[RMDB]
RNA sequence: GGGAACGACUCGAGUAGAGUCGAAAACGCGGCGAGCCGCCCCAAAACCAACGAUUGGGCCACGAUGCGUAGGCAUAGCUGAGGUGGCGUCGCGGCCCUCACCGGCGACACCACAGAGGAUCUCGGGAAUUGUCACACUGUUCGCAGUGUGACAAUUAAAAGAAACAACAACAACAAC
Reactivity to 2A3 in 0.01 (KOAc 150mM, MgCl2 10mM, bicine 150mM(pH8.5), 24C), signal-to-noise 4, nucleotides 027 to 126: c030g000c010g020g000c020g030a040g040c010c010g010c020c010c010c020a040a110a010a040c050c030a070a060c070g110a110u070u140g020g020g000c040c010a050c020g050a030u100g030c050g060u070a080g090g000c070a120u130a110g050c060u050g030a040g030g110u080g060g000c000g000u000c000g010c000g040g000c000c000c020u030c010a040c010c030g050g010c040g010a010c020a050c050c020a050c030a050g080a040g050g040a070u030c020u020c040g020g000g050
Reactivity to DMS in 0.01 (KOAc 150mM, MgCl2 10mM, bicine 150mM(pH8.5), 24C), signal-to-noise 3, nucleotides 027 to 126: c110g000c040g000g010c020g020a170g050c020c030g000c060c000c050c060a060a050a120a130c090c080a070a100c130g000a100u050u000g010g000g010c090c030a080c080g000a050u000g000c020g020u010a120g010g000c020a040u010a090g030c060u000g010a150g020g010u000g010g030c010g010u020c000g020c040g010g000c010c000c010u010c010a100c120c020g000g010c010g020a010c010a030c030c020a050c130a050g000a090g010g020a050u020c010u000c020g000g000g030
About this RNA:
Structure probing data (2A3 and DMS) for a 177-nucleotide construct. Source: RMDB library OK1LIB, as collected in RNAgym. Conditions: 150 mM KOAc, 10 mM MgCl2 and 150 mM bicine (pH 8.5), 24 C. For 2A3 the reverse transcriptase was SuperScript II with manganese. Reactivities are given for positions 27 through 126. The 2A3 profile rests on 5,151 reads.